[RMDB]
RNA sequence: GGGAACGACUCGAGUAGAGUCGAAAAAGCCACCGCUACGGCGGUGGCAAGUAGAAAAGUUGGUGCUUAGACCACGCCCUCUACCGUAAUAAUAGAUAAGUAGGCGAGUAUCAGUACGCUGAUACAAAAAACACUCACACGUUCGCGUGUGAGUGAAGUGUGGUACUAGGUUCGCCUAGUACCACACAAAAGAAACAACAACAACAAC
Reactivity to 2A3 in 0.01 (KOAc 150mM, MgCl2 10mM, bicine 150mM(pH8.5), 24C), signal-to-noise 1, nucleotides 027 to 156: a010g000c000c000a000c000c000g030c000u020a030c200g130g040c050g020g000u010g000g030c000a000a030g040u010a000g000a000a090a050a050g150u240u140g030g000u110g020c160u160u110a020g050a060c000c010a000c010g020c000c000c000u000c000u000a030c020c020g080u050a050a040u130a180a110u060a130g180a110u090a200a000g080u130a020g120g000c110g030a020g000u010a000u020c000a000g000u000a010c220g050c060u040g010a000u070a000c190a000a130a000a000a000a000c000a000c000u010c000a000c000a000c000g040u040u000c260g050c010g140u000g000u000g000a000g000u000g000a020a010
Chemical mapping of a 207-nucleotide RNA with 2A3. Values are in units of 0.01, from 0 to 300, in steps of 10. 2A3 adducts were read by reverse transcription with SuperScript II with manganese. The RNA was probed in 150 mM KOAc, 10 mM MgCl2 and 150 mM bicine (pH 8.5) at 24 C.